Structure probing data (2A3) for a 207-nucleotide construct. The data come from the RNA Mapping Database (RMDB), library VIROID. Conditions: 150 mM KOAc, 10 mM MgCl2 and 150 mM bicine (pH 8.5), 24 C. For 2A3 the reverse transcriptase was SuperScript II with manganese. Reactivities are given for positions 27 through 156.
RNA sequence: GGGAACGACUCGAGUAGAGUCGAAAACCCCUUCUUCGACUCGGAACGGCUCAUCUCGACAAGAGGCGGCAGUCCUCAGUACUCUUACUCUUUUCUGUAAAGAGGAGACUGCUGGACCCGCCGCCCAAGUUCGAGCAUGGGCCAUCUCCGAGCGAAGCCUACCUCUAGGGUUCGCCCUAGAGGUAGGAAAAGAAACAACAACAACAAC
Reactivity to 2A3 in 0.01 (KOAc 150mM, MgCl2 10mM, bicine 150mM(pH8.5), 24C), signal-to-noise 4, nucleotides 027 to 156: c010c000c000c020u070u060c020u000u000c010g300a300c000u000c000g010g000a020a020c050g010g020c000u010c000a000u000c010u000c000g000a010c030a120a090g100a180g050g000c000g000g000c000a010g000u010c000c000u010c000a060g010u140a300c030u000c010u050u180a270c000u040c000u050u220u160u030c210u300g250u300a050a020a000g000a010g020g000a010g010a000c000u010g070c060u010g000g010a000c010c020c090g010c010c000g010c000c010c010a030a030g010u080u020c010g000a010g000c030a000u000g010g000g000c000c000a000u000c000u000c000c010g010a000g000c000g000a000a000g000